[RMDB]
RNA sequence: GGGAACGACUCGAGUAGAGUCGAAAACGUCCCCGUCGUACAGAAUGGUAACAUAUCUCUCCAAAUAUCUGAGCUUGGGUAUACGGGGACACCCAACCCCUUGGGAAGAUUGGGUAUAUGGCUAAAUUACAUCGAUUGUACUUCGGUACAAUCGAAACACGACGAAUUUCUUCGGAAAUUCGUCGUGAAAAGAAACAACAACAACAAC
Reactivity to 2A3 in 0.01 (KOAc 150mM, MgCl2 10mM, bicine 150mM(pH8.5), 24C), signal-to-noise 1, nucleotides 027 to 156: c050g030u020c000c000c000c000g090u130c060g010u020a000c020a040g020a130a050u110g130g000u110a130a010c020a020u110a160u140c090u000c040u080c110c050a010a130a100u230a220u060c060u210g010a020g020c100u080u120g020g000g040u020a020u000a090c040g000g000g000g080a020c000a020c000c000c000a040a140c060c030c000c000u040u090g110g010g000a050a060g060a160u100u110g010g020g000u000a060u020a020u060g030g000c020u020a150a150a000u190u270a190c080a080u010c030g000a000u000u020g000u000a000c000u020u030c300g010g000u000a000c000a000a010u000c000g000a000a000a000
Annotation
An RNA of 207 nucleotides, treated with 2A3 and read out base by base. Source: RMDB library M2RFPK, as collected in RNAgym. Conditions: 150 mM KOAc, 10 mM MgCl2 and 150 mM bicine (pH 8.5), 24 C.